Source: RMDB libraries RFM100 and RFMREP, as collected in RNAgym. The record gives the reactivity of an RNA of 177 nucleotides to 2A3 and DMS. For DMS the reverse transcriptase was MarathonRT. Reactivities are given for positions 27 through 126.
RNA sequence: GGGAACGACUCGAGUAGAGUCGAAAAACGCUGACUCCAGUACGCUGGAGUCAGCGAUGUGGGAGCGAGAUUAAGGCUUGCUGGUUAUCACGUUAAACGUAGUCAGUCUUUUUCUCUCUCCUAUCAAAUUGUGACUCCUAUUCGUAGGAGUCACAAUAAAAGAAACAACAACAACAAC
Reactivity to 2A3 in 0.01 (KOAc 150mM, MgCl2 10mM, bicine 150mM(pH8.5), 24C), signal-to-noise 4, nucleotides 027 to 126: a000c020g000c010u000g000a000c000u000c000c000a000g010u040a030c290g040c080u000g030g000a000g000u000c000a000g000c010g000a000u020g020u050g010g000g000a000g000c010g010a000g000a000u000u000a000a000g010g010c020u030u030g000c020u020g010g060u110u060a220u210c140a060c200g060u070u250a090a130a030c060g040u060a020g000u010c040a000g000u000c000u000u000u000u010u000c000u000c000u010c010u000c000c000u000a000u020c000a020a070
Reactivity to DMS in 0.01 (KOAc 150mM, MgCl2 10mM, bicine 150mM(pH8.5), 24C), signal-to-noise 2, nucleotides 027 to 126: a130c000g020c010u000g010a000c000u000c000c000a020g030u020a070c300g000c010u000g010g000a030g010u000c010a010g050c000g040a000u010g030u020g000g000g000a010g010c060g000a000g020a000u000u030a020a000g020g010c040u000u000g030c000u000g000g010u000u060a140u060c180a140c270g000u040u020a060a040a010c000g000u020a010g000u000c180a020g000u000c000u000u000u000u000u000c000u000c000u000c000u000c000c000u000a010u020c060a130a070